[RMDB]
Source information
An RNA of 177 nucleotides, treated with DMS and 2A3 and read out base by base. Source: RMDB library OK2TRN, as collected in RNAgym. The reactions ran in a buffer of 150 mM KOAc, 10 mM MgCl2 and 150 mM bicine (pH 8.5), at 24 C. For 2A3, 5,196 sequencing reads were counted.
RNA sequence: GGGAACGACUCGAGUAGAGUCGAAAAAUGGUAUAGACACUGGCAAGUUAACACCUCGUGAUAGAGGGUUUUUGAUAAAUGCAGAUGCUUCUAUUGCUAACUUAAGAGUUAAAAAUGCUCCGCCGGUUAGUACUCCAUUAUUCGUAAUGGAGUACUAAAAAGAAACAACAACAACAAC
Reactivity to DMS in 0.01 (KOAc 150mM, MgCl2 10mM, bicine 150mM(pH8.5), 24C), signal-to-noise 6, nucleotides 027 to 126: a100u010g000g010u000a050u010a080g010a090c100a030c030u000g010g010c060a110a070g010u010u000a040a060c120a100c020c020u010c050g010u010g020a130u010a130g000a020g010g010g020u000u000u000u000u000g010a080u010a050a090a090u010g010c010a050g010a060u000g010c050u000u010c030u010a040u000u000g010c030u000a050a050c070u000u000a080a200g000a040g000u000u020a010a060a090a100a070u000g010c030u000c030c090g000c060c050g000g010u000
Reactivity to 2A3 in 0.01 (KOAc 150mM, MgCl2 10mM, bicine 150mM(pH8.5), 24C), signal-to-noise 4, nucleotides 027 to 126: a000u080g020g000u060a040u020a040g040a020c020a010c050u030g090g030c030a050a070g020u060u050a060a010c070a230c070c000u020c020g030u070g060a050u070a090g020a020g010g010g020u010u010u010u030u060g060a050u040a100a110a040u130g010c010a010g040a120u020g030c010u050u010c000u010a050u030u110g000c010u010a020a050c010u080u070a080a010g020a000g060u010u040a080a210a110a090a090u060g010c010u000c020c020g040c020c010g000g010u000